[RMDB]
RNA sequence: GGGAACGACUCGAGUAGAGUCGAAAAGACGUGGAGGUCUCGCGCCCUCCUUUGCGCGUAAGUACGUCGAAAUUCGGUGCUCUGGAUCGCACCGUGUGAUCCAUUAGAUAUCCGCUGUGUGCCGCGGUUGGGCAUUUACACUUACCCGAAAGGGGAAGGCCAGUAAAUAUUUCGAUAUUUACUGGCCAAAAGAAACAACAACAACAAC
Reactivity to 2A3 in 0.01 (KOAc 150mM, MgCl2 10mM, bicine 150mM(pH8.5), 24C), signal-to-noise 3, nucleotides 027 to 156: g020a010c020g030u060g040g060a050g070g020u020c020u040c070g000c000g010c020c010c030u120c030c020u060u060u070g060c050g000c010g030u040a040a070g060u040a060c010g010u000c050g050a030a060a100u130u060c000g060g000u020g000c020u030c030u090g060g030a040u050c030g000c040a040c110c070g000u040g000u030g020a020u030c030c000a060u060u100a020g070a070u060a060u090c010c000g000c080u070g010u020g010u030g110c040c030g030c010g040g000u040u040g040g010g010c010a030u030u000u190a040c110a020c040u050u060a030c000c000c000g000a020a020a020g000g000g010g000a000a060
Reactivity to DMS in 0.01 (KOAc 150mM, MgCl2 10mM, bicine 150mM(pH8.5), 24C), signal-to-noise 2, nucleotides 027 to 156: g020a060c030g020u000g010g010a130g020g020u000c060u010c070g010c060g030c150c040c060u000c030c050u000u010u020g000c000g010c030g020u010a090a160g020u000a070c030g000u000c060g020a080a100a230u000u000c070g010g030u000g040c040u000c130u000g010g000a080u000c080g030c010a120c070c150g020u030g030u000g010a090u000c040c030a130u000u000a080g000a200u000a090u020c020c010g000c050u040g020u010g010u010g020c050c030g030c000g010g000u000u010g000g000g040c020a070u000u000u000a050c050a080c020u000u000a130c000c000c000g000a030a140a170g010g020g010g020a060a180